[RMDB]
RNA sequence: GGGAACGACUCGAGUAGAGUCGAAAACGUCGAUGCGCUUGAUGAGCUGGCUGACCGGGCUCCGCUAUUGCGGGACGACGCCGUGACUUGCGGUCUGAUCGACCGGAUCGGAUUUCGCGACCAAGCCACAAGGGCGUAGUUUCGACUACGCCCUUGUAAAAGAAACAACAACAACAAC
Reactivity to 2A3 in 0.01 (KOAc 150mM, MgCl2 10mM, bicine 150mM(pH8.5), 24C), signal-to-noise 1, nucleotides 027 to 126: c000g100u020c030g020a060u100g060c030g000c090u040u120g000a090u060g020a170g030c020u050g050g000c000u040g040a060c030c000g130g000g000c030u060c040c000g000c020u180a250u300u290g010c040g000g000g050a040c020g010a000c050g000c020c000g020u040g090a250c050u020u170g000c010g000g030u000c020u020g020a090u000c000g160a230c060c080g000g030a040u020c000g050g000a010u190u070u020c050g000c000g040a050c030c000a040a000g040c030c000
Reactivity to DMS in 0.01 (KOAc 150mM, MgCl2 10mM, bicine 150mM(pH8.5), 24C), signal-to-noise 2, nucleotides 027 to 126: c060g000u000c050g010a090u000g010c100g030c030u000u030g000a150u010g010a150g020c050u000g020g030c050u010g000a060c060c010g000g000g000c050u010c030c020g010c050u010a080u010u010g010c000g020g000g010a100c070g020a060c100g020c070c030g000u010g000a080c130u000u000g000c030g020g000u000c010u000g000a090u020c110g010a180c200c080g000g000a040u000c010g000g000a040u010u000u000c060g000c010g010a160c080c040a090a110g020c030c060

Structure probing data (2A3 and DMS) for a 177-nucleotide construct. For DMS, 1,896 sequencing reads were counted. Reactivities are given for positions 27 through 126. In probing experiments dimethyl sulfate is read out at A N1 and C N3, which are open when not base-paired. Source: RMDB library OK2TST, as collected in RNAgym.